[RMDB]
RNA sequence: GGGAACGACUCGAGUAGAGUCGAAAAUCAUGUUAAGGAACCACAGAGUGGUGUGUUAGAAAUCCCGUGAUCAUCACAGGGGCUAACACUAACGUCUGUAUCAUGAAUAAGGACUAUCGAAGAUAGGUCGCUAGGAAAUGUUCGCAUUUCCUAGCGAAAAAGAAACAACAACAACAAC
Reactivity to 2A3 in 0.01 (KOAc 150mM, MgCl2 10mM, bicine 150mM(pH8.5), 24C), signal-to-noise 2, nucleotides 027 to 126: u020c000a000u010g020u020u040a090a090g090g040a040a030c030c010a020c030a040g150a050g160u040g040g040u030g010u000g010u050u000a000g000a010a090a010u030c000c000c000g000u000g000a090u240c150a020u110c010a010c020a020g010g000g050g000c000u000a040a000c020a010c020u020a040a030c030g110u030c010u030g060u040a020u060c000a020u030g100a090a080u170a090a060g110g000a010c000u010a020u010c060g180a120a080g000a050u030a020g110g030
Reactivity to DMS in 0.01 (KOAc 150mM, MgCl2 10mM, bicine 150mM(pH8.5), 24C), signal-to-noise 2, nucleotides 027 to 126: u000c000a000u010g000u000u000a110a300g000g020a050a150c050c060a040c010a090g020a240g010u010g000g030u000g030u000g010u000u000a010g000a010a010a300u020c000c000c000g010u000g020a130u000c300a150u020c000a000c010a010g000g000g000g020c000u000a000a000c000a010c010u000a080a050c190g010u000c000u000g000u000a050u000c000a010u010g010a030a110u010a140a110g010g000a170c010u000a030u000c020g000a100a110g020a060u010a030g000g010
Conditions: 150 mM KOAc, 10 mM MgCl2 and 150 mM bicine (pH 8.5), 24 C. The record gives the reactivity of an RNA of 177 nucleotides to 2A3 and DMS. For DMS, 1,958 sequencing reads were counted.